RNA sequence: GGGAACGACUCGAGUAGAGUCGAAAAUAUUACAUCUUCGGAUGUAAUAACUGGUGGUGGCUGGCUUGUUGCUACUGGCGCAACUGUUGCCAUGACUGCGCAAUCGCUCUGAAUUCGUUCAGAGCAAGUGGAAAAAAGCAUUCGUGCUUUUUUCCACAAAAGAAACAACAACAACAAC
Reactivity to DMS in 0.01 (KOAc 150mM, MgCl2 10mM, bicine 150mM(pH8.5), 24C), signal-to-noise 1, nucleotides 027 to 126: u010a010u000u000a020c020a000u000c010u010u000c180g030g010a010u000g000u000a010a000u000a030a080c070u000g010g020u010g010g030u000g020g010c010u010g000g020c070u010u010g000u000u000g010c020u000a180c180u000g020g020c180g000c030a020a060c040u000g010u000u000g010c020c030a020u000g010a120c050u000g030c040g030c070a140a040u000c200g000c000u000c000u000g010a000a000u000u010c140g000u000u000c000a000g000a000g000c000a000a020
Reactivity to 2A3 in 0.01 (KOAc 150mM, MgCl2 10mM, bicine 150mM(pH8.5), 24C), signal-to-noise 1, nucleotides 027 to 126: u030a000u000u030a000c010a000u010c050u020u040c130g210g000a000u000g010u000a000a000u030a030a060c080u160g060g020u020g050g020u020g000g010c070u030g000g000c050u020u110g000u020u090g040c020u030a140c130u110g160g000c070g020c030a010a050c010u050g190u260u110g000c020c020a050u050g130a090c000u000g010c040g000c060a060a060u120c070g010c010u000c000u010g010a000a000u080u040c160g060u090u020c050a000g000a000g060c000a010a000